[RMDB]
RNA sequence: GGGAACGACUCGAGUAGAGUCGAAAAGGUAUCCACUUCGGUGGAUACCAAAGGCGAUCCCAGCAACAGGGAACAACAACAAUAGAUGCAUCCCUAACGCCAAAAUUCCGGAUUUCGAUCCGGAAAAGUCUAUGAAGUUAUUCGUAACUUCAUAGACAAAAGAAACAACAACAACAAC
Reactivity to 2A3 in 0.01 (KOAc 150mM, MgCl2 10mM, bicine 150mM(pH8.5), 24C), signal-to-noise 6, nucleotides 027 to 126: g000g000u000a000u000c000c000a010c000u040u060c180g080g000u010g000g010a000u000a000c000c000a000a040a010g010g000c010g020a090u020c010c000c010a010g100c040a010a100c040a080g000g010g020a040a050c020a010a010c010a020a020c020a130a170u120a240g130a100u120g040c040a080u030c000c000c000u010a080a030c020g020c010c000a030a130a020a040u060u000c010c000g000g000a010u050u040u090c140g050a010u040c000c000g000g000a010a010a010a000
Reactivity to DMS in 0.01 (KOAc 150mM, MgCl2 10mM, bicine 150mM(pH8.5), 24C), signal-to-noise 5, nucleotides 027 to 126: g010g010u000a010u000c000c000a000c000u010u010c160g030g030u000g010g000a020u000a000c000c000a020a060a070g020g040c030g020a130u000c010c000c020a170g020c170a100a090c240a030g010g000g000a050a090c040a070a050c060a040a060c160a100a130u010a080g020a100u000g010c100a070u000c010c000c000u010a130a120c020g010c010c040a110a060a090a180u000u000c000c000g000g000a030u000u000u010c170g000a030u000c000c000g010g010a010a000a060a160